[RMDB]
RNA sequence: GGGAACGACUCGAGUAGAGUCGAAAAGUGAGAACGUUCGCGUUCUCACAAAUACUAAGACCGAAGCAUAGAUGGCCGACACUUCCCUUGGAAACGGCACAAAAAUGAUAGGUUUCGACCUAUCAAACAUGAAGUACCGAUUCGUCGGUACUUCAUGAAAAGAAACAACAACAACAAC
Reactivity to 2A3 in 0.01 (KOAc 150mM, MgCl2 10mM, bicine 150mM(pH8.5), 24C), signal-to-noise 3, nucleotides 027 to 126: g000u000g000a000g010a010a010c010g010u050u060c160g020c000g100u000u000c020u000c000a000c000a000a000a000u080a000c030u060a130a000g060a040c000c040g100a080a010g020c050a090u080a130g110a120u110g100g000c010c000g030a030c030a040c090u040u030c000c010c000u000u060g040g010a040a100a020c020g010g020c040a020c050a120a060a010a010a010u080g000a010u000a000g030g000u020u040u100c150g070a040c010c000u000a000u020c040a020a020a000
Reactivity to DMS in 0.01 (KOAc 150mM, MgCl2 10mM, bicine 150mM(pH8.5), 24C), signal-to-noise 4, nucleotides 027 to 126: g020u000g000a010g010a010a000c000g010u000u000c210g020c010g020u000u000c010u020c000a020c010a050a100a060u010a110c150u010a070a080g010a110c050c040g010a060a070g010c080a070u010a070g010a140u000g000g030c020c030g000a120c080a060c130u010u000c010c000c040u000u000g000g000a050a080a130c060g000g000c040a070c150a010a050a040a060a050u010g000a010u000a010g000g010u000u010u010c230g010a030c000c000u000a000u000c010a020a040a150
The record gives the reactivity of an RNA of 177 nucleotides to 2A3 and DMS. DMS adducts were read by reverse transcription with MarathonRT. For 2A3 the reverse transcriptase was SuperScript II with manganese. Conditions: 150 mM KOAc, 10 mM MgCl2 and 150 mM bicine (pH 8.5), 24 C. For 2A3, 5,648 sequencing reads were counted.